[RMDB]
RNA sequence: GGGAACGACUCGAGUAGAGUCGAAAAAAUGGGUUCGCCCAUUGAAGCUGCGUACUACGAACCACCAACAGCUGGUUUGUCAGAAGUCCCAAAUAGGACUUCUUGGAUUUAACCAGACAUGGUGUCCCGUAUCGCCGACUAACACUUUCGAGUGUAAAAUUUGUCCCUUGUUCGCAAGGGACAAAUUAAAAGAAACAACAACAACAAC
Reactivity to 2A3 in 0.01 (KOAc 150mM, MgCl2 10mM, bicine 150mM(pH8.5), 24C), signal-to-noise 2, nucleotides 027 to 156: a000a000u110g010g040g020u160u100c250g160c090c000c040a020u040u030g070a060a020g060c130u120g030c020g000u080a100c000u110a080c090g000a090a030c010c000a000c000c000a030a080c000a100g100c010u000g000g020u000u020u030g020u030c020a000g000a000a000g020u030c070c020c050a130a220a080u300a150g000g000a000c000u000u000c010u000u150g070g000a040u260u190u160a000a000c000c000a000g020a040c020a060u080g000g000u000g000u040c040c020c000g020u030a050u300c010g020c010c020g110a060c050u230a190a010c060a000c060u150u150u240c300g060a040g020u000g030u110a130a130
Reactivity to DMS in 0.01 (KOAc 150mM, MgCl2 10mM, bicine 150mM(pH8.5), 24C), signal-to-noise 1, nucleotides 027 to 156: a040a040u000g020g040g010u000u010c300g110c000c030c010a050u000u000g000a100a210g000c000u010g000c030g010u010a130c060u000a010c010g010a060a050c050c020a040c000c000a020a100c070a160g040c020u000g000g020u000u010u010g010u000c050a090g000a000a010g010u010c020c000c020a010a150a180u010a060g010g000a030c000u000u000c000u000u000g070g020a050u000u010u000a050a010c010c000a050g000a030c080a300u000g000g000u000g010u000c020c090c040g000u000a080u000c070g000c060c010g050a140c050u000a190a160c010a010c040u000u010u000c170g000a010g020u020g010u000a050a100